RNA sequence: GGGAACGACUCGAGUAGAGUCGAAAAUUGCUCUAGAGAAACUUCUGGCCUCUCACCUGCUUAUGCACCAACAUAUGUUAGUGUUGAUGACAAGUAUAAGACGAGUGAUGAGCUUUGCGUGAAUCUUCGAGUAGAGAGUUCGCUCUCUACAAAAGAAACAACAACAACAAC
Reactivity to 2A3 in 0.01 (KOAc 150mM, MgCl2 10mM, bicine 150mM(pH8.5), 24C), signal-to-noise 9, nucleotides 027 to 129: u100u100g040c010u020c040u040a040g000a020g060a110a100a030c030u150u070c020u120g070g020c030c010u000c000u000c000a010c010c020u050g000c000u020u010a000u020g010c010a020c030c010a010a010c010a030u120a040u270g240u210u150a200g010u030g000u030u020g030a080u090g010a030c060a190a030g000u010a000u010a030a020g060a110c050g020a030g020u010g020a070u150g000a010g030c000u050u080u090g080c070g010u040g040a080a050u010c020u080u070c050g040a040
Reactivity to DMS in 0.01 (KOAc 150mM, MgCl2 10mM, bicine 150mM(pH8.5), 24C), signal-to-noise 9, nucleotides 027 to 129: u030u030g020c040u030c040u000a070g020a030g030a100a100a110c160u030u020c020u010g000g000c120c060u020c060u030c000a070c000c000u000g000c050u000u000a020u010g020c000a090c090c000a020a010c020a040u040a090u100g060u070u070a170g040u030g030u040u020g040a090u040g040a120c220a080a100g000u000a050u000a050a020g020a130c130g000a000g030u030g030a060u070g040a000g000c100u020u030u030g010c290g000u010g020a100a180u020c030u000u000c070g030a150